[RMDB]
RNA sequence: GGGAACGACUCGAGUAGAGUCGAAAACAUGUCUGCACCCCUUGGGCCACAGUGGGCAGGUGCUGACACCUGUGAGCUGCUCUGUGCUCGGCCCUUCCCUUUAUGGGGCGGGCUUGGGUAUAGGGACAUUGGUGGGUGUAUUCGUACACCCACCAAUAAAAGAAACAACAACAACAAC
Reactivity to DMS in 0.01 (KOAc 150mM, MgCl2 10mM, bicine 150mM(pH8.5), 24C), signal-to-noise 2, nucleotides 027 to 126: c120a100u000g010u000c000u000g010c050a060c040c000c120c100u020u000g040g030g020c050c020a040c130a190g030u000g000g000g010c070a090g000g000u000g020c110u000g020a070c010a050c050c040u000g020u020g030a270g030c120u000g000c000u000c030u000g050u000g000c000u000c010g010g000c100c000c020u000u000c000c000c000u010u000u000a120u040g020g010g010g050c300g000g010g000c010u020u010g010g010g010u000a030u000a030g010g000g020a060c170
Overview:
Structure probing data (DMS) for a 177-nucleotide construct.